The data come from the RNA Mapping Database (RMDB), library TTRINS. Structure probing data (2A3 and DMS) for a 177-nucleotide construct.

RNA sequence: GGGAACGACUCGAGUAGAGUCGAAAAGAUAUGGAAGCGACGCGACGCAUCGAUCUAUAAAAGUCAACACUAUAUCGGAAACGAUAUAGUGUUGUCGCUAUAGGGAGCGUCCAUCGCUUCCUAAGUCCAUGGUAUGUUGGUUCGCCAACAUACCAUGAAAAGAAACAACAACAACAAC
Reactivity to 2A3 in 0.01 (KOAc 150mM, MgCl2 10mM, bicine 150mM(pH8.5), 24C), signal-to-noise 3, nucleotides 027 to 126: g010a040u090a050u210g010g010a000a020g020c010g040a020c080g110c300g080a010c000g000c040a170u300c050g050a040u000c020u030a020u020a020a300a040a060g090u060c010a010a000c000a000c000u000a010u000a000u020c010g010g030a060a030a050c000g010a000u000a000u010a010g000u000g000u000u010g000u010c000g000c060u010a010u010a040g050g000g000a030g000c000g000u000c020c000a010u020c000g000c000u000u000c000c000u000a030a010g000u020c020
Reactivity to DMS in 0.01 (KOAc 150mM, MgCl2 10mM, bicine 150mM(pH8.5), 24C), signal-to-noise 4, nucleotides 027 to 126: g000a090u010a250u000g000g010a020a000g010c010g020a010c040g020c250g010a000c020g040c010a300u000c240g000a060u020c010u010a020u000a020a100a120a140g010u000c000a010a010c000a000c000u000a000u000a000u000c000g020g010a070a100a140c020g020a010u000a000u000a000g000u010g000u000u000g010u000c010g020c300u010a010u000a020g000g000g000a020g020c000g010u000c010c020a050u000c000g010c010u010u000c010c000u010a010a060g000u000c020
Notes
The reactions ran in a buffer of 150 mM KOAc, 10 mM MgCl2 and 150 mM bicine (pH 8.5), at 24 C.